Background
Chemical mapping of a 177-nucleotide RNA with 2A3 and DMS. The data come from the RNA Mapping Database (RMDB), library OK1LIB. For DMS, 5,848 sequencing reads were counted. For 2A3 the reverse transcriptase was SuperScript II with manganese. For DMS the reverse transcriptase was MarathonRT. DMS (dimethyl sulfate) methylates the pairing face of unpaired adenines and cytosines. Conditions: 150 mM KOAc, 10 mM MgCl2 and 150 mM bicine (pH 8.5), 24 C.
RNA sequence: GGGAACGACUCGAGUAGAGUCGAAAAAGCACCUGAUCCGCCACAUAAGGUGCUAAAUGGGGCGUACUAAUGGGAUCAAUGCAGCGCGAUUCGAAAUCAAUUAACGACAAAAAGGAGAGCACAGUAGUACGAGUCAGUAUUUCGAUACUGACUCGUAAAAAGAAACAACAACAACAAC
Reactivity to 2A3 in 0.01 (KOAc 150mM, MgCl2 10mM, bicine 150mM(pH8.5), 24C), signal-to-noise 4, nucleotides 027 to 126: a000g020c020a020c010c000u040g000a040u070c050c040g040c000c000a050c010a060u060a150a040g050g000u000g000c020u000a020a010a050u160g000g000g000g050c040g020u040a040c010u120a040a080u100g030g020g040a030u070c050a090a080u080g030c020a010g030c020g030c030g030a030u030u020c010g010a120a020a080u120c060a030a050u150u070a100a090c050g070a040c110a030a100a080a000a030g100g000a070g020a000g070c050a020c010a110g050u090a000g060
Reactivity to DMS in 0.01 (KOAc 150mM, MgCl2 10mM, bicine 150mM(pH8.5), 24C), signal-to-noise 4, nucleotides 027 to 126: a060g010c020a020c000c020u000g000a130u000c090c010g020c050c030a060c120a100u060a200a030g010g020u020g010c020u020a080a050a100u020g000g000g010g020c060g040u000a100c110u020a050a090u020g000g000g000a020u020c070a090a060u000g010c000a030g000c070g040c030g000a100u000u020c050g000a050a040a070u030c110a020a080u060u030a050a070c190g000a090c170a040a050a060a030a030g000g020a050g000a060g040c060a040c050a050g030u020a030g020